[RMDB]
RNA sequence: GGGAACGACUCGAGUAGAGUCGAAAAGAUAUGGAGAGUGUCAGAUUGAGGAGAUGUAUCGGAAACGAUACAUACCUCCAAUGAUGUCUGAGCACUCUCCUAAGUCAAAUCAGGGUUCGCCCUGAAAUCAAUUAAACGCGUUCGCGCGUUUAAUUGAAAAAGAAACAACAACAACAAC
Reactivity to 2A3 in 0.01 (KOAc 150mM, MgCl2 10mM, bicine 150mM(pH8.5), 24C), signal-to-noise 1, nucleotides 027 to 126: g000a000u020a030u150g030g010a030g000a000g040u040g020u050c010a000g020a060u100u130g060a030g060g010a030g000a030u010g010u030a000u010c010g000g000a110a010a040c020g000a000u000a000c000a000u060a160c020c000u000c010c020a050a300u300g060a100u160g020u030c000u020g040a070g130c010a000c010u000c000u000c000c000u000a010a010g000u020c000a000a000a200u020c000a000g040g060g000u090u120c230g140c100c020c010u000g000a020a020a060
Reactivity to DMS in 0.01 (KOAc 150mM, MgCl2 10mM, bicine 150mM(pH8.5), 24C), signal-to-noise 2, nucleotides 027 to 126: g010a050u010a300u000g010g030a000g030a050g030u000g010u000c000a010g020a010u000u000g050a260g030g010a020g040a030u000g000u000a000u000c000g000g010a080a050a180c010g010a050u020a000c000a000u010a090c300c000u010c000c010a120a170u000g010a180u000g010u010c010u010g000a160g000c050a010c000u010c000u000c000c000u000a000a130g000u010c070a090a110a120u000c000a000g040g040g020u000u030c300g010c010c000c010u010g010a020a050a060